[RMDB]
RNA sequence: GGGAACGACUCGAGUAGAGUCGAAAAUUUAUUACUUAGAUACGACCGUUCGUUAGAAGCUCGGUUUUCAAUCUCUCUUUUCCAGUCCAUCAUAGUUGACCCGUGAGUUAUAACGCCCGCCUAAGGAUAGUCAUACCUAUUUCGAUAGGUAUGACUAAAAAGAAACAACAACAACAAC
Reactivity to DMS in 0.01 (KOAc 150mM, MgCl2 10mM, bicine 150mM(pH8.5), 24C), signal-to-noise 3, nucleotides 027 to 126: u010u010u010a070u030u000a120c060u010u010a070g000a110u000a060c160g000a060c050c030g000u000u000c020g030u010u010a110g020a140a190g030c040u000c080g030g000u020u010u010u010c070a060a100u000c050u000c040u020c020u000u000u000u000c020c030a100g000u000c030c030a050u000c050a050u000a110g000u000u010g010a110c060c040c040g010u010g010a100g000u000u000a090u010a080a160c190g000c050c020c030g040c060c060u000a040a050g010g000a180
Reactivity to 2A3 in 0.01 (KOAc 150mM, MgCl2 10mM, bicine 150mM(pH8.5), 24C), signal-to-noise 1, nucleotides 027 to 126: u080u060u040a090u060u000a100c020u040u080a030g040a090u090a140c060g010a010c030c020g000u010u030c030g080u110u080a090g040a300a010g050c020u040c060g010g000u060u020u010u080c060a120a070u020c010u020c010u040c000u020u140u030u130c010c030a030g020u010c010c000a040u060c020a010u050a060g060u080u070g050a030c000c020c010g010u030g050a040g020u110u060a100u050a250a010c040g000c040c000c000g010c030c000u010a020a000g130g010a090
Structure probing data (DMS and 2A3) for a 177-nucleotide construct. Reactivities are given for positions 27 through 126. For DMS the reverse transcriptase was MarathonRT.